[RMDB]
RNA sequence: GGGAACGACUCGAGUAGAGUCGAAAAGUCGAACCGUCCAACUCCGUGGAAGCCGUAAUGGCAGGAAGCGGACGAACGGCGGCAUAGGGAAACGUGAUUCAACCUGGGGCCCAUGAAAAGACGAGCAUGAUGUCCGUACCGAGAACCGACACAGGUGGCACUUCAAUUAGUUCGCUAAUUGAAGUGCAAAAGAAACAACAACAACAAC
Reactivity to 2A3 in 0.01 (KOAc 150mM, MgCl2 10mM, bicine 150mM(pH8.5), 24C), signal-to-noise 2, nucleotides 027 to 156: g060u030c000g000a050a020c030c020g010u000c010c010a010a000c000u000c000c000g000u020g010g070a030a000g010c000c000g090u300a210a180u300g000g000c010a020g070g040a000a000g020c010g000g020a010c010g010a000a010c000g010g000c000g000g000c040a140u070a070g040g000g000a060a040a000c030g050u080g060a130u110u080c040a050a070c010c020u030g000g000g050g000c000c020c000a060u090g050a020a100a000a040g090a010c030g000a020g020c030a030u130g030a050u040g070u000c000c020g040u060a110c020c040g050a050g020a130a030c030c010g060a030c020a030c040a100g060g000u010g040
Reactivity to DMS in 0.01 (KOAc 150mM, MgCl2 10mM, bicine 150mM(pH8.5), 24C), signal-to-noise 1, nucleotides 027 to 156: g040u000c010g010a070a110c030c000g000u030c010c030a040a130c080u000c030c000g030u000g000g000a300a170g050c010c000g040u000a110a110u000g030g060c000a020g020g000a220a300g000c050g000g000a040c030g000a060a050c000g040g030c010g000g080c020a020u000a170g000g020g000a050a090a100c020g020u010g000a260u000u000c040a060a100c070c020u030g020g010g050g010c020c070c020a100u000g000a090a070a110a100g030a060c020g000a060g000c000a140u000g000a160u000g040u000c010c020g010u010a170c010c000g000a250g020a020a170c040c010g010a060c000a040c050a030g030g010u000g000

The record gives the reactivity of an RNA of 207 nucleotides to 2A3 and DMS.
DMS adducts were read by reverse transcription with MarathonRT.